[RMDB]
Source: RMDB library M2RFPK, as collected in RNAgym.
An RNA of 207 nucleotides, treated with 2A3 and DMS and read out base by base.
Values cover nucleotides 27 to 156.
2A3 adducts were read by reverse transcription with SuperScript II with manganese.
The reactions ran in a buffer of 150 mM KOAc, 10 mM MgCl2 and 150 mM bicine (pH 8.5), at 24 C.
The 2A3 profile rests on 1,794 reads.
RNA sequence: GGGAACGACUCGAGUAGAGUCGAAAACGCACUCGCAGCUUAAUAACCUGCGCUGAGCGCUUCUCCCCCAGCUUGCCUGUGUCCUAGGGAAUUGGAAGGUCAUCCUUCACAGGAUCGUGUGGAAGUCAUUACUCGUGAGUGUUCGCACUCACGAGAAGAAGAACAUUUUCUUCGGAAAAUGUUCUUCAAAAGAAACAACAACAACAAC
Reactivity to 2A3 in 0.01 (KOAc 150mM, MgCl2 10mM, bicine 150mM(pH8.5), 24C), signal-to-noise 3, nucleotides 027 to 156: c010g000c000a050c020u010c010g000c000a000g000c000u020u040a010a000u030a020a050c000c000u010g020c010g010c150u020g020a040g020c000g000c070u160u040c040u070c030c000c000c000c000a010g010c020u110u240g050c010c010u040g010u020g000u090c010c070u080a060g000g040g070a090a110u060u110g030g040a080a060g050g030u110c040a070u120c010c000u060u050c000a010c000a020g000g020a030u070c030g010u070g040u110g110g000a020a030g050u010c050a160u090u250a060c000u000c000g000u000g000a000g000u010g040u080u110c160g000c090a000c000u010c000a000c010g020a000g010a000a000
Reactivity to DMS in 0.01 (KOAc 150mM, MgCl2 10mM, bicine 150mM(pH8.5), 24C), signal-to-noise 1, nucleotides 027 to 156: c020g050c020a060c010u010c030g010c000a030g020c010u000u000a170a140u010a150a130c240c000u000g000c020g030c160u000g030a070g020c000g010c030u010u000c040u000c020c000c010c030c030a090g010c070u000u000g040c040c000u030g030u000g030u010c040c010u000a070g020g050g010a070a150u000u000g000g000a100a070g000g020u000c070a140u000c010c040u030u020c030a110c030a100g010g000a070u000c070g000u010g050u000g000g000a080a200g020u000c060a140u000u000a180c010u000c000g010u000g000a060g010u000g020u000u010c300g050c020a020c000u000c000a000c000g000a000g000a010a020